[RMDB]
RNA sequence: GGGAACGACUCGAGUAGAGUCGAAAACCGUAGGAUGCCUACCCACCGCUCCUUGGGACAAUGAUGUGAGCUUCGAAAGAGGCUCAUUGAGUCCCUUGGAGCGAGGGCAUCCUAAACGGAAAACUGAAGAGUUGUAGUUCGCUACAACUCUUCAGAACCAACAAAUCCUCUUCGGAGGAUUUGUUGGAAAAGAAACAACAACAACAAC
Reactivity to 2A3 in 0.01 (KOAc 150mM, MgCl2 10mM, bicine 150mM(pH8.5), 24C), signal-to-noise 1, nucleotides 027 to 156: c010c000g020u000a060g000g010a000u000g010c000c010u060a130c130c030c050a030c030c000g000c000u010c000c000u000u000g010g000g000a000c010a040a300u100g020a050u090g050u000g000a000g000c000u010u000c000g010a040a030a030g010a010g000g000c010u000c000a000u000u020g010a000g000u000c020c000c030u000u000g000g000a010g000c000g000a000g000g000g000c000a000u000c000c000u000a000a000a000c000g020g030a040a080a010a090c000u000g000a000a000g000a010g000u010u000g000u000a000g020u030u110c250g000c150u000a010c000a000a000c000u010c000u000u000c000a000g000a000a000